[RMDB]
RNA sequence: GGGAACGACUCGAGUAGAGUCGAAAAAGACCACCUCUACGGAGGUGGUCAAGUCACGUAGCUAGUACCAUGUUGCAAUACUAGAGCGUUAGUCCUGGGGCGUACGGUGGCAGUACGCUGCCACCGAUAAAACUUGAAUACUUCGGUAUUCAAGUAACCUAAUUUAUCUGUUCGCAGAUAAAUUAGGAAAAGAAACAACAACAACAAC
Reactivity to DMS in 0.01 (KOAc 150mM, MgCl2 10mM, bicine 150mM(pH8.5), 24C), signal-to-noise 2, nucleotides 027 to 156: a130g000a030c020c000a010c010c000u010c020u000a100c300g070g010a030g010g030u010g000g020u000c020a010a030g020u010c150a070c010g010u000a110g060c010u000a030g020u010a020c050c010a020u000g010u000u020g060c040a080a080u000a020c000u000a050g000a300g000c020g010u000u000a150g010u010c020c000u000g000g010g020g000c160g000u000a040c010g000g050u010g010g120c020a080g000u010a100c240g010c000u000g010c010c000a000c000c000g000a020u000a010a030a050a020c010u020u000g030a000a010u000a000c010u000u000c300g020g000u000a030u000u000c010a020a010g010u000a020a070
Reactivity to 2A3 in 0.01 (KOAc 150mM, MgCl2 10mM, bicine 150mM(pH8.5), 24C), signal-to-noise 2, nucleotides 027 to 156: a000g000a000c000c000a000c000c000u000c010u020a060c260g100g000a000g030g000u010g020g000u000c000a000a010g020u010c000a000c000g000u010a030g010c000u000a020g010u020a020c030c090a130u130g080u080u080g110c070a110a090u020a030c010u030a000g010a000g030c010g000u010u050a010g030u030c000c000u000g000g000g010g020c100g050u170a040c010g080g010u020g010g000c000a000g010u020a040c250g010c040u000g000c000c010a000c010c000g000a010u030a010a050a010a010c000u010u000g000a010a000u000a000c000u020u000c110g110g000u000a010u020u000c000a000a000g010u000a010a030
An RNA of 207 nucleotides, treated with DMS and 2A3 and read out base by base. The DMS profile rests on 3,187 reads. For DMS the reverse transcriptase was MarathonRT. The data come from the RNA Mapping Database (RMDB), library M2RFPK. 2A3 adducts were read by reverse transcription with SuperScript II with manganese. The RNA was probed in 150 mM KOAc, 10 mM MgCl2 and 150 mM bicine (pH 8.5) at 24 C. Reactivities are given for positions 27 through 156.